[RMDB]
RNA sequence: GGGAACGACUCGAGUAGAGUCGAAAAGAUAUGGAGUCUGGCUUUUGACGCUCUACUGGUCGGAAACGACCACUAGAGCGAUAAGCCACUCCUAAGUCAAACCAUUUUGCCUUCGGGCAAAAUGGAACAGUUACCGAUAGUUCGCUAUCGGUAACUGAAAAGAAACAACAACAACAAC
Reactivity to 2A3 in 0.01 (KOAc 150mM, MgCl2 10mM, bicine 150mM(pH8.5), 24C), signal-to-noise 2, nucleotides 027 to 126: g020a020u080a050u160g000g010a000g040u090c220u080g020g030c010u100u100u070u220g190a100c020g000c000u010c000u000a020c030u010g000g000u000c010g000g000a010a080a070c000g000a010c010c000a000c000u000a000g000a000g000c010g000a000u010a000a000g000c000c000a000c000u000c000c000u010a130a020g040u010c030a000a060a120c000c000a000u010u010u000u000g010c010c000u050u100c290g060g020g000c000a000a010a000a000u020g000g010a020a020
Reactivity to DMS in 0.01 (KOAc 150mM, MgCl2 10mM, bicine 150mM(pH8.5), 24C), signal-to-noise 3, nucleotides 027 to 126: g000a030u000a300u000g010g000a000g020u000c120u000g040g020c000u000u000u000u000g020a170c070g020c000u000c000u000a020c110u000g000g010u000c000g010g010a070a090a220c010g010a010c010c000a000c050u000a010g000a000g010c020g030a020u000a010a020g010c010c000a020c000u000c000c000u000a050a090g030u000c050a130a150a230c010c000a010u000u000u000u000g020c000c000u000u010c150g030g010g000c000a000a010a000a000u000g010g000a060a060